[RMDB]
RNA sequence: GGGAACGACUCGAGUAGAGUCGAAAAGCGUACUACUUCGAGGUAGGGUUGCCAGCUAACCGUUGAAAGAGCUCCCAAAUAGGAGCUCUGGAGGUUAGGGCACUCCCUACUACCCACCGAAGUAUCGCAAAGUGGAGGGCGUUCGCGCCCUCCACAACAAUCUAAUAAUGUUCGCAUUAUUAGAUUGAAAAGAAACAACAACAACAAC
Reactivity to 2A3 in 0.01 (KOAc 150mM, MgCl2 10mM, bicine 150mM(pH8.5), 24C), signal-to-noise 4, nucleotides 027 to 156: g000c000g030u110a120c030u000a000c000u020u000c000g020a020g000g000u000a000g000g000g020u020u020g010c010c020a100g150c090u010a010a000c010c000g160u180u040g020a010a020a010g000a010g000c000u050c000c020c040a200a280a060u300a090g000g000a000g000c000u000c010u000g000g010a020g000g000u010u000a000g010g000g010c000a020c080u110c000c000c000u000a000c000u000a010c010c030c010a050c030c000g020a010a000g000u010a030u300c000g000c040a060a040a060g000u000g010g020a010g000g010g000c050g040u140u170c230g040c000g000c090c000c000u010c000c000a000c000a000a000
Reactivity to DMS in 0.01 (KOAc 150mM, MgCl2 10mM, bicine 150mM(pH8.5), 24C), signal-to-noise 2, nucleotides 027 to 156: g030c010g030u010a080c080u000a010c000u000u000c000g000a070g020g010u000a010g010g020g040u000u000g000c000c020a160g040c020u000a010a010c030c010g010u000u000g030a220a150a070g010a020g040c000u000c000c000c010a040a130a210u000a070g010g000a030g020c000u000c000u000g000g010a100g020g010u000u000a010g020g000g000c000a020c070u000c010c000c000u000a010c000u000a010c010c010c020a300c170c000g010a030a030g000u000a020u000c020g040c030a060a130a130g000u000g020g010a050g090g100g000c000g010u000u010c190g020c040g000c000c000c010u000c010c010a000c010a010a230